[RMDB]
RNA sequence: GGGAACGACUCGAGUAGAGUCGAAAAACGUUAUCCAGAAAUAUGCCAACCAUAAUUGCGUUCUGUGUUGCCAAGAAGGCAGUAGCAAAGGCUGAAGAUAUGGGCUAAGGCCUUGGUACUAAGGUAACAGCACUCAUCCUUUCGAGGAUGAGUGCUGAAAAGAAACAACAACAACAAC
Reactivity to DMS in 0.01 (KOAc 150mM, MgCl2 10mM, bicine 150mM(pH8.5), 24C), signal-to-noise 2, nucleotides 027 to 126: a070c170g020u010u000a110u010c020c000a080g000a110a090a020u000a080u000g020c030c040a140a040c080c020a060u000a110a160u000u010g010c020g000u000u000c030u000g000u010g010u020u000g020c030c020a090a150g010a070a080g000g000c020a030g010u000a030g010c060a000a010a080g000g040c020u010g000a150a120g010a090u020a120u000g010g000g010c170u000a080a230g000g020c010c020u000u000g010g010u020a060c080u000a060a050g010g020u030a070a110
Reactivity to 2A3 in 0.01 (KOAc 150mM, MgCl2 10mM, bicine 150mM(pH8.5), 24C), signal-to-noise 1, nucleotides 027 to 126: a000c100g000u090u040a060u040c050c010a010g110a050a070a030u200a050u070g000c010c010a000a040c050c040a130u110a140a070u110u130g070c060g040u030u040c000u060g050u030g060u120u050g000c000c000a130a030g030a040a000g110g030c010a000g030u080a010g000c050a100a060a050g060g000c000u030g100a030a000g000a000u100a120u150g050g160g030c010u010a090a050g000g030c010c010u020u000g040g000u020a030c090u110a100a090g070g000u030a090a000